[RMDB]
An RNA of 177 nucleotides, treated with 2A3 and DMS and read out base by base.
Values cover nucleotides 27 to 126.
RNA sequence: GGGAACGACUCGAGUAGAGUCGAAAAGUCUGGAGAUUCAUGGGGCCAGUCUAGAUCCUUCAAUGUUGAUCCAGUAUCGUGAUGUCAGAUGUAAGAAGACGCCAGAAGUGCUUCAGCAGGCCCUGACAUGAGUUUAGCAUUUCGAUGCUAAACUCAUAAAAGAAACAACAACAACAAC
Reactivity to 2A3 in 0.01 (KOAc 150mM, MgCl2 10mM, bicine 150mM(pH8.5), 24C), signal-to-noise 4, nucleotides 027 to 126: g050u050c000u010g090g000a070g000a080u040u100c060a050u160g000g000g080g000c030c040a010g000u030c050u010a060g010a160u030c000c000u070u160c090a100a110u100g030u140u090g000a040u000c040c000a030g040u110a150u100c080g040u090g070a040u110g020u040c010a010g070a130u040g080u090a140a060g000a040a020g020a080c030g020c020c020a050g030a100a020g040u100g060c000u030u070c020a060g000c020a000g010g040c010c030c000u000g000a000c010
Reactivity to DMS in 0.01 (KOAc 150mM, MgCl2 10mM, bicine 150mM(pH8.5), 24C), signal-to-noise 4, nucleotides 027 to 126: g000u010c000u000g000g000a030g000a170u010u000c040a060u000g020g000g000g000c090c040a120g020u020c060u010a110g010a090u030c030c010u000u050c180a080a070u010g000u020u010g020a100u010c030c040a090g000u010a030u020c040g010u020g000a090u020g010u000c040a050g020a090u020g010u000a110a160g000a050a040g000a050c050g020c050c040a140g000a100a110g000u040g000c000u020u000c000a070g010c080a130g010g000c020c030c000u010g010a070c140
The data come from the RNA Mapping Database (RMDB), library OK1LIB.